This 207-nucleotide RNA was probed chemically with 2A3 and DMS. The 2A3 profile rests on 1,950 reads. The reactions ran in a buffer of 150 mM KOAc, 10 mM MgCl2 and 150 mM bicine (pH 8.5), at 24 C. DMS adducts were read by reverse transcription with MarathonRT.

RNA sequence: GGGAACGACUCGAGUAGAGUCGAAAAAGUGUAUGAAGUACGUAGAGUGUCGGCAAGCUCUAUAUAUGGACACUUACGAAGGGUUUUGGUUGUUUUGUAUCUCAAGGCGACUUUGAGUAUUUGAGGAAAAAGACUUACGCCUUCGGGCGUAAGUCAAGUAAUGUGGUUAGUUCGCUAACCACAUUACAAAAGAAACAACAACAACAAC
Reactivity to 2A3 in 0.01 (KOAc 150mM, MgCl2 10mM, bicine 150mM(pH8.5), 24C), signal-to-noise 3, nucleotides 027 to 156: a000g110u090g000u060a160u140g080a050a010g020u040a040c030g000u020a020g010a010g080u010g060u120c100g100g040c100a100a060g010c030u000c030u040a050u020a030u010a020u090g070g010a000c010a000c030u040u040a030c110g070a050a080g080g040g020u040u100u150u210g050g010u020u020g000u020u030u020u030g040u020a090u020c010u010c030a020a020g040g000c020g040a050c050u070u100u100g050a060g040u040a090u060u080u100g030a000g010g060a030a150a000a000a030g000a000c000u020u000a010c000g010c000c000u020u030c180g060g000g000c020g000u000a000a000g000u000c000a000a000
Reactivity to DMS in 0.01 (KOAc 150mM, MgCl2 10mM, bicine 150mM(pH8.5), 24C), signal-to-noise 1, nucleotides 027 to 156: a080g040u010g000u000a170u020g000a160a300g020u000a030c060g030u000a010g010a020g000u010g000u000c070g090g000c140a200a280g000c020u010c010u000a040u000a040u000a050u000g010g010a050c030a040c030u010u010a080c110g040a090a080g020g000g020u000u000u050u000g060g000u010u000g000u060u000u000u000g010u000a150u010c030u000c060a050a080g040g000c020g060a110c110u000u010u010g010a080g030u010a060u010u000u010g020a090g000g000a090a060a060a130a170g000a060c000u000u000a000c000g040c010c030u000u020c300g100g030g010c000g010u000a000a010g010u000c000a000a100